[RMDB]
RNA sequence: GGGAACGACUCGAGUAGAGUCGAAAACGCGUCAGAUUCGUCUGACGCGAAAGCAUAGAACAGCGCUAUCAUGUAUUAUUGUUCUAUGCAACUAUAGCGCUAAAACGAUACCGUUCGCGGUAUCGAACUUUGACUACGAGUUCGCUCGUAGUCAAAGAAAAGAAACAACAACAACAAC
Reactivity to 2A3 in 0.01 (KOAc 150mM, MgCl2 10mM, bicine 150mM(pH8.5), 24C), signal-to-noise 4, nucleotides 027 to 126: c010g020c000g010u000c000a010g000a030u030u070c120g080u030c080u000g000a000c000g020c000g000a000a000a000g000c000a020u020a010g010a010a000c010a030g010c030g000c070u080a090u240c060a120u220g200u160a140u220u050a100u090u150g010u010u000c020u020a010u010g000c000a010a000c010u040a010u070a130g040c030g030c110u090a030a070a030a050c000g000a000u000a000c030c000g010u020u040c250g000c000g070g000u000a000u000c000g000a010a000
Reactivity to DMS in 0.01 (KOAc 150mM, MgCl2 10mM, bicine 150mM(pH8.5), 24C), signal-to-noise 2, nucleotides 027 to 126: c010g000c010g030u000c000a000g000a020u000u010c200g040u010c000u000g010a020c010g000c010g000a020a030a080g000c000a030u000a010g010a030a030c030a040g030c090g020c050u000a120u000c210a120u020g010u020a100u000u000a110u010u000g010u000u010c010u000a020u000g000c050a050a010c100u000a060u000a020g030c040g030c050u000a040a030a080a110c020g010a020u000a010c000c000g010u000u010c190g020c000g000g000u000a000u000c000g000a030a030
An RNA of 177 nucleotides, treated with 2A3 and DMS and read out base by base. 2A3 is a SHAPE reagent: it acylates the 2'-hydroxyl of flexible nucleotides of all four kinds.